[RMDB]
RNA sequence: GGGAACGACUCGAGUAGAGUCGAAAACGCUGGGCGUAUACUCGUCUGUAUGUGGAGCUGAAGCGCGCACGGCUAUGAAGCAUACGACGAAAGGUACGCCUGUGCUGAAGCGCGCACGGCAACCGAAAGGUGCGUAUUGGUUAUUUCGAUAACCAAAAUACCGGUCAACAUUCGUGUUGACCGGUAUAAAAGAAACAACAACAACAAC
Reactivity to DMS in 0.01 (KOAc 150mM, MgCl2 10mM, bicine 150mM(pH8.5), 24C), signal-to-noise 1, nucleotides 027 to 156: c050g080c010u000g000g010g000c000g050u000a050u000a110c000u020c000g020u000c000u010g070u020a010u000g020u000g010g060a010g060c000u010g010a090a080g060c000g020c020g040c000a300c130g020g000c010u010a080u010g000a130a300g010c010a000u010a000c000g000a060c080g000a050a060a040g000g040u010a000c000g000c010c020u010g040u010g050c000u000g020a090a090g030c010g000c000g060c000a300c100g000g000c020a030a000c020c010g030a060a100a190g010g000u000g010c030g060u010a110u000u020g010g000u000u000a010u000u000u020c170g000a080u000a020a160c010c020a040a040a170
Reactivity to 2A3 in 0.01 (KOAc 150mM, MgCl2 10mM, bicine 150mM(pH8.5), 24C), signal-to-noise 2, nucleotides 027 to 156: c000g050c000u030g010g000g000c000g020u020a000u020a020c070u040c040g000u000c060u150g010u000a010u000g050u010g180g170a010g010c010u060g020a260a030g080c010g000c000g040c010a020c000g020g000c010u060a140u300g150a120a040g020c000a010u010a000c020g000a000c010g050a140a060a020g020g000u000a000c010g020c010c000u000g000u000g000c000u000g010a090a040g000c000g010c010g020c030a010c020g000g000c020a030a030c010c000g040a090a020a030g000g000u020g040c030g000u040a240u060u140g000g000u010u010a030u030u150u050c200g040a030u030a020a010c000c000a000a020a000

Notes
Source: RMDB library RNAMAK, as collected in RNAgym. Structure probing data (DMS and 2A3) for a 207-nucleotide construct. The RNA was probed in 150 mM KOAc, 10 mM MgCl2 and 150 mM bicine (pH 8.5) at 24 C. The 2A3 profile rests on 2,047 reads. Reactivities are given for positions 27 through 156. Values are in units of 0.01, from 0 to 300, in steps of 10.